[RMDB]
Structure probing data (DMS and 2A3) for a 177-nucleotide construct. Reactivities are given for positions 27 through 126.

RNA sequence: GGGAACGACUCGAGUAGAGUCGAAAAAAGUUGAAAAUCAACGAAAAAUAAACGGUGGUGAUGUUGCAAUUCCAAACUGCUGGAUCACAUGAUAACAAAACAGGAACAGCCCUUAAUAUGCUCGAGAGAUUCCCAAGUAAUUCGUUACUUGGGAAUCAAAAGAAACAACAACAACAAC
Reactivity to DMS in 0.01 (KOAc 150mM, MgCl2 10mM, bicine 150mM(pH8.5), 24C), signal-to-noise 3, nucleotides 027 to 126: a040a020g000u000u000g000a090a110a120a080u040c020a000a040c030g020a030a030a040a080a150u030a040a060a030c080g020g010u000g000g020u010g000a070u010g000u000u000g000c080a080a050u000u000c040c070a080a100a050c100u010g030c060u000g000g000a040u000c050a030c040a150u020g020a160u020a030a090c150a060a020a040a030c210a070g000g000a050a080c150a010g010c020c010c030u000u020a090a070u040a040u030g000c010u000c020g000a090g000a170
Reactivity to 2A3 in 0.01 (KOAc 150mM, MgCl2 10mM, bicine 150mM(pH8.5), 24C), signal-to-noise 3, nucleotides 027 to 126: a000a000g090u040u010g040a070a060a000a190u180c050a040a020c010g120a000a030a070a020a000u300a060a110a020c060g000g040u050g060g090u000g050a070u040g050u210u000g020c030a070a060u080u000c040c010a010a080a100c100u100g000c040u010g010g010a040u100c030a000c000a060u170g090a150u070a120a030c100a050a070a020a010c060a020g000g110a030a030c020a050g000c000c010c000u020u000a060a040u080a060u140g060c050u030c070g030a060g000a020